RNA sequence: GGGAACGACUCGAGUAGAGUCGAAAAGAGGGCCAGACACUGCGCUAUCCCGCAGGGCGACCGAUACACGGGUGUUCGUGAUCGUAUAUCCCCCCAAGGAGCGUCUGCGGGGUUGAUCCCGGGCAGUACUAACAAUGUGGUUCGCCACAUUGUUAGUAAAAGAAACAACAACAACAAC
Reactivity to 2A3 in 0.01 (KOAc 150mM, MgCl2 10mM, bicine 150mM(pH8.5), 24C), signal-to-noise 1, nucleotides 027 to 126: g020a040g010g050g040c070c010a000g050a110c040a010c070u010g000c000g000c060u010a010u050c000c000c000g040c000a010g010g090g020c000g040a020c020c030g010a030u150a120c030a020c000g000g000g090u300g190u280u160c010g020u040g000a110u020c040g000u060a100u010a060u300c000c010c000c010c010c000a010a020g030g020a090g020c000g020u050c000u010g000c000g000g040g000g000u000u060g000a010u030c020c000c020g000g020g010c020a000g000u000
Reactivity to DMS in 0.01 (KOAc 150mM, MgCl2 10mM, bicine 150mM(pH8.5), 24C), signal-to-noise 2, nucleotides 027 to 126: g000a120g020g000g020c050c010a080g000a110c090a060c020u020g030c080g020c040u010a040u000c030c010c020g030c030a030g010g010g020c030g010a100c150c020g000a050u000a080c070a030c050g000g000g020u000g000u010u010c020g010u010g000a100u000c020g040u030a090u020a130u000c040c020c020c040c040c080a120a120g000g000a250g000c000g010u010c010u000g020c010g010g000g000g030u000u000g010a060u000c020c010c020g010g000g000c040a080g020u000